RNA sequence: GGGAACGACUCGAGUAGAGUCGAAAACCUGGCAGCGCUGCAACGGAAUCCAGUGCCCACCGGAGCGCCAGUUCGUGCGAGAGCCGCUUCGGCUUCUUCUUCGCGGAACGGCUCCGCGUGUACGCCUGGGACCCCGCGAGCGAUUGCAAAGGUCCCGGAUUAUCUGGACCUUCGGGUCCAGAUAAUCAAAAGAAACAACAACAACAAC
Reactivity to 2A3 in 0.01 (KOAc 150mM, MgCl2 10mM, bicine 150mM(pH8.5), 24C), signal-to-noise 2, nucleotides 027 to 156: c000c000u020g000g040c000a000g030c020g010c080u300g090c040a070a000c020g000g000a040a050u090c000c010a060g010u070g220c020c020c000a000c000c010g000g000a000g000c030g080c050c020a080g000u000u000c030g120u090g070c020g010a010g000a000g010c000c040g190c300u230u300c200g030g000c000u130u060c010u180u040c020u050u120c060g010c000g030g010a010a000c010g000g000c000u000c030c000g000c020g010u010g000u030a040c030g000c000c000u010g000g000g000a010c020c000c000c020g050c030g020a000g010c000g140a250u000u120g000c000a210a180a030g000g000u010c000c000c000g000

An RNA of 207 nucleotides, treated with 2A3 and read out base by base. The data come from the RNA Mapping Database (RMDB), library VIROID. Values cover nucleotides 27 to 156. Conditions: 150 mM KOAc, 10 mM MgCl2 and 150 mM bicine (pH 8.5), 24 C. For 2A3 the reverse transcriptase was SuperScript II with manganese. The 2A3 profile rests on 790 reads.